[RMDB]
RNA sequence: GGGAACGACUCGAGUAGAGUCGAAAAGUGGAUGCAUAGCAGAGGAAAAUGAAUACGUGUGCACUAAAUGUAACCCAAACGGAUUCUGCUAUAACAUUGUGUACCCAUUUACAAAAACACCAAUAUAUAAUAAAAAUGGGCAAAUCGUGGGUUACCACCAGUUCUAUAGUUUCGACUAUAGAACUGGAAAAGAAACAACAACAACAAC
Reactivity to DMS in 0.01 (KOAc 150mM, MgCl2 10mM, bicine 150mM(pH8.5), 24C), signal-to-noise 1, nucleotides 027 to 156: g000u000g010g010a090u000g020c040a050u010a090g050c030a040g030a080g060g030a110a180a070a100u000g020a130a100u000a030c030g000u000g000u000g000c050a190c080u000a000a050a300u000g020u000a040a050c010c000c050a020a130a070c060g000g000a190u010u000c010u000g010c050u000a080u000a090a040c010a060u000u000g000u000g030u010a080c000c040c000a050u030u000u000a160c050a030a100a100a040a190c050a160c060c030a010a180u010a200u000a140u010a080a080u010a100a030a120a080a030u010g030g030g050c000a050a080a050u000c020g010u000g000g000g030u000u000a010c040c080a130
Reactivity to 2A3 in 0.01 (KOAc 150mM, MgCl2 10mM, bicine 150mM(pH8.5), 24C), signal-to-noise 3, nucleotides 027 to 156: g060u080g060g060a070u030g020c060a030u010a030g000c010a030g030a050g100g100a080a090a070a150u140g040a060a030u170a090c030g000u040g000u020g110c030a010c090u130a060a090a060u080g010u010a020a010c000c000c000a090a030a020c040g040g020a050u080u000c010u020g020c000u030a060u030a120a030c050a040u120u080g030u030g010u120a050c070c000c010a040u010u050u080a070c050a030a180a060a110a010c010a050c030c020a030a000u150a030u070a030u060a300a110u160a130a180a010a020a000u060g010g000g000c040a000a090a050u070c030g030u010g000g000g020u040u070a000c000c070a000